RNA sequence: GGGAACGACUCGAGUAGAGUCGAAAAGCCGAGUGCAGCGAAUAAUUUCCAAUUAUGCGGCAUGCCACAUGUGCCUGCACACGCAGCGUUGACAGUUCGGCAAGUCGCAGUGUGUAGUCCGUAGCUAAGUAGGAUUAUACUUCGGUAUAAUCCUACUAAAAGAAACAACAACAACAAC
Reactivity to DMS in 0.01 (KOAc 150mM, MgCl2 10mM, bicine 150mM(pH8.5), 24C), signal-to-noise 6, nucleotides 027 to 126: g020c060c010g010a070g000u020g000c020a040g000c040g000a070a060u010a060a100u000u010u010c070c050a090a110u030u040a070u000g000c010g010g010c010a070u010g010c010c020a080c110a080u010g010u020g000c050c000u010g010c000a100c160a190c220g010c040a050g000c120g000u020u010g000a040c020a030g000u020u020c150g000g000c000a050a070g040u000c020g010c010a030g010u010g000u000g010u000a030g000u000c030c050g000u020a090g000c060u010a080
Reactivity to 2A3 in 0.01 (KOAc 150mM, MgCl2 10mM, bicine 150mM(pH8.5), 24C), signal-to-noise 9, nucleotides 027 to 126: g030c010c010g020a060g030u130g010c050a040g010c030g080a080a030u130a110a070u070u060u080c040c020a030a070u170u070a060u160g030c010g020g000c020a020u020g020c000c010a080c020a120u070g020u050g020c010c000u010g000c030a060c010a020c170g020c030a040g000c030g080u070u110g130a050c010a040g040u120u140c080g030g000c010a000a010g020u020c010g000c030a020g000u020g000u010g010u060a050g050u010c040c070g060u050a030g040c050u080a090
Overview
This 177-nucleotide RNA was probed chemically with DMS and 2A3. The DMS profile rests on 20,392 reads. 2A3 is a SHAPE reagent: it acylates the 2'-hydroxyl of flexible nucleotides of all four kinds. For DMS the reverse transcriptase was MarathonRT. 2A3 adducts were read by reverse transcription with SuperScript II with manganese. The RNA was probed in 150 mM KOAc, 10 mM MgCl2 and 150 mM bicine (pH 8.5) at 24 C. Reactivities are given for positions 27 through 126. It was measured as part of the RMDB library OK1LIB.